[RMDB]
RNA sequence: GGGAACGACUCGAGUAGAGUCGAAAAAAUAUGCUCGACAGGCUGCCUGUCCGACAGAGCUUUUAGAUCUUCUGAUCUUUCCCUGCAGCAUAUCGCUUAUGCAUCAAGGGAUUGUCGGAUCACACAAACGCACAAUCACGUUCGCGUGAUUGUGCGUAAAAGAAACAACAACAACAAC
Reactivity to DMS in 0.01 (KOAc 150mM, MgCl2 10mM, bicine 150mM(pH8.5), 24C), signal-to-noise 1, nucleotides 027 to 126: a060a010u000a080u000g000c020u000c050g020a060c200a040g010g030c100u010g050c090c000u000g000u000c020c000g000a020c060a050g020a140g020c170u000u000u000u000a060g000a020u000c030u000u040c140u030g020a000u000c060u000u000u000c000c010c000u010g000c260a220g000c080a020u000a010u030c210g020c220u020u010a010u010g000c000a200u000c160a150a060g010g020g000a090u020u000g020u020c000g010g000a000u000c130a030c140a010c180a020a060